[RMDB]
RNA sequence: GGGAACGACUCGAGUAGAGUCGAAAAGGAAUUUGAUUACUAAAUGCCUGAGGUAGUCUUCUUUGGGUUAAUCUGCUUGGUGUUCUACAACCUUCUUGUUCUUGGAUAUUGAUAUCUUCCUCUAGGUUUGGGAAGUUCUCUGUUAUUAUCCUUUGAACACAAGAUGAGACUUCGGUCUCAUCUUGUGAAAAGAAACAACAACAACAAC
Reactivity to 2A3 in 0.01 (KOAc 150mM, MgCl2 10mM, bicine 150mM(pH8.5), 24C), signal-to-noise 2, nucleotides 027 to 156: g050g010a050a040u200u210u170g050a040u050u060a100c080u090a010a200a110u270g070c020c030u050g010a010g090g000u040a010g020u030c000u040u010c000u060u130u020g040g010g030u060u110a090a040u050c030u060g030c040u060u010g030g030u040g030u030u010c020u080a170c010a110a070c010c030u060u080c040u090u000g030u010u020c020u030u050g070g000a050u010a020u030u120g000a020u020a020u060c000u020u000c020c020u020c100u130a230g120g060u100u190u190g030g010g000a000a020g010u080u000c030u000c000u020g140u130u090a100u070u070a050u110c000c000u040u040u280g000a010a000
The record gives the reactivity of an RNA of 207 nucleotides to 2A3. It was measured as part of the RMDB library OK3TST. For 2A3 the reverse transcriptase was SuperScript II with manganese.